Chemical mapping of a 207-nucleotide RNA with 2A3 and DMS. For 2A3 the reverse transcriptase was SuperScript II with manganese. The 2A3 profile rests on 3,975 reads. DMS adducts were read by reverse transcription with MarathonRT. For DMS, 6,139 sequencing reads were counted. Source: RMDB library M2RFPK, as collected in RNAgym. Conditions: 150 mM KOAc, 10 mM MgCl2 and 150 mM bicine (pH 8.5), 24 C.

RNA sequence: GGGAACGACUCGAGUAGAGUCGAAAAACAUAGGCCAUGCUUACGAGCAUGGCAUAUGACGAAUCUCAAGCAAUCAAGCAUUCUACUUCUAUUGCAACACUGAGGAGCUUACGAGCUCCUCAGUGAAAAAAGAGAGUAAUGUUCGCAUUACUCUCAACAUUAUCCGUAUGUUCGCAUACGGAUAAUGAAAAGAAACAACAACAACAAC
Reactivity to 2A3 in 0.01 (KOAc 150mM, MgCl2 10mM, bicine 150mM(pH8.5), 24C), signal-to-noise 4, nucleotides 027 to 156: a000c010a000u010a010g010g000c010c000a000u000g000c000u100u070a100c270g080a030g000c000a000u010g000g000c010a000u000a000u000g010a020c080g090a100a110u030c010u010c050a050a070g000c010a020a030u080c030a060a000g020c020a110u160u060c050u130a080c010u040u080c030u080a040u020u060g020c030a080a020c000a040c010u000g000a000g000g000a000g000c010u080u030a070c250g030a010g000c000u010c000c000u000c000a000g000u000g000a010a000a000a010a000a000g000a000g000a000g000u000a000a010u000g020u050u080c130g010c100a000u000u000a000c000u000c000u000c000a000a000
Reactivity to DMS in 0.01 (KOAc 150mM, MgCl2 10mM, bicine 150mM(pH8.5), 24C), signal-to-noise 3, nucleotides 027 to 156: a090c010a010u000a020g000g040c000c010a010u000g020c000u010u000a110c270g050a100g020c000a010u010g010g000c000a000u010a000u000g000a160c070g020a130a140u000c030u000c020a080a100g010c030a070a110u000c070a060a110g000c060a160u000u000c100u000a060c000u000u000c080u000a120u010u010g000c040a130a220c010a010c010u000g010a020g000g000a010g020c000u000u000a120c230g010a050g020c000u000c000c000u000c000a010g000u000g000a000a020a040a100a050a040g020a030g000a030g020u000a000a010u000g010u000u010c300g030c010a010u000u000a020c000u000c000u010c000a030a040